[RMDB]
RNA sequence: GGGAACGACUCGAGUAGAGUCGAAAAGUUCGCAUGGUGCACUAUUGUGUUAUUAGUAACUAAGUAAGCUUACAAUCGAAAAUGUUUAACCAUAAAAGGGUAAAAUGGUGUAAGACAGUCUGAUUCUUUACGGCUUCACGUUUCGACGUGAAGCCAAGUAUAGGGUAAGUUUCGACUUACCCUAUACAAAAGAAACAACAACAACAAC
Reactivity to 2A3 in 0.01 (KOAc 150mM, MgCl2 10mM, bicine 150mM(pH8.5), 24C), signal-to-noise 3, nucleotides 027 to 156: g040u070u100c040g010c110a040u090g030g010u040g000c020a030c030u100a110u160u180g030u000g050u090u040a060u010u010a090g100u050a070a030c040u010a100a010g050u010a060a050g060c030u000u070a020c040a100a120u090c050g060a030a090a010a030u040g010u060u060u030a040a050c010c000a020u080a140a190a010a010g070g040g030u040a020a040a000a030u040g000g000u000g060u040a030a010g050a050c020a010g050u000c060u070g040a110u080u040c010u020u050u060a050c050g000g000c010u000u000c000a000c000g010u030u060u070c170g060a010c000g010u000g000a000a000g000c000c000a010a000
Reactivity to DMS in 0.01 (KOAc 150mM, MgCl2 10mM, bicine 150mM(pH8.5), 24C), signal-to-noise 2, nucleotides 027 to 156: g010u000u000c000g070c070a130u000g010g010u000g030c030a060c030u010a050u000u020g080u000g030u000u000a030u000u000a130g010u010a010a070c030u010a090a160g000u000a050a060g000c030u000u000a040c060a080a080u000c050g000a070a050a060a050u000g030u010u000u000a050a070c000c030a020u010a030a090a180a140g020g000g030u000a030a030a100a050u020g010g010u010g020u000a030a110g020a120c030a000g000u010c080u000g000a190u000u000c000u020u000u000a060c170g040g050c020u020u010c000a020c010g000u010u000u000c290g000a070c060g000u000g010a030a010g000c000c000a010a010